This 177-nucleotide RNA was probed chemically with 2A3 and DMS.
The reactions ran in a buffer of 150 mM KOAc, 10 mM MgCl2 and 150 mM bicine (pH 8.5), at 24 C.
For 2A3, 6,563 sequencing reads were counted.
For 2A3 the reverse transcriptase was SuperScript II with manganese.
The DMS profile rests on 8,646 reads.
The data come from the RNA Mapping Database (RMDB), library OK2TRN.
RNA sequence: GGGAACGACUCGAGUAGAGUCGAAAAAAGGGGUUGUAUAUUGGGUGCCUGCCUGAAGUUACUCAGUGACCUAACAAAGCAAAACACCUGUCACUCAACUAAAAGUUCAGAUUUGAAGUCUCACCCCAGUGAAUAACUAGUUCGCUAGUUAUUCACUAAAAGAAACAACAACAACAAC
Reactivity to 2A3 in 0.01 (KOAc 150mM, MgCl2 10mM, bicine 150mM(pH8.5), 24C), signal-to-noise 5, nucleotides 027 to 126: a010a020g070g010g000g020u120u060g080u060a150u030a040u150u090g030g010g010u030g040c030c030u020g030c010c020u020g030a050a020g060u050u050a040c040u050c130a030g030u020g070a030c000c010u030a090a040c040a110a080a010g040c020a020a050a020a050c030a050c030c010u020g020u060c000a010c030u030c010a030a070c030u070a090a070a050a100g020u070u060c020a010g010a220u090u090u130g050a060a020g020u010c010u010c030a040c000c000c000c000
Reactivity to DMS in 0.01 (KOAc 150mM, MgCl2 10mM, bicine 150mM(pH8.5), 24C), signal-to-noise 7, nucleotides 027 to 126: a070a090g010g010g000g010u000u000g010u010a080u000a170u010u010g020g010g020u000g020c100c070u010g010c070c030u000g010a080a110g010u010u000a050c090u010c080a070g010u000g010a070c050c070u000a050a090c110a070a100a140g000c070a040a050a110a080c080a040c060c020u000g010u000c080a060c060u000c050a040a060c070u000a040a040a090a100g010u010u000c070a050g000a110u000u000u000g010a050a080g000u000c030u000c080a170c040c010c010c110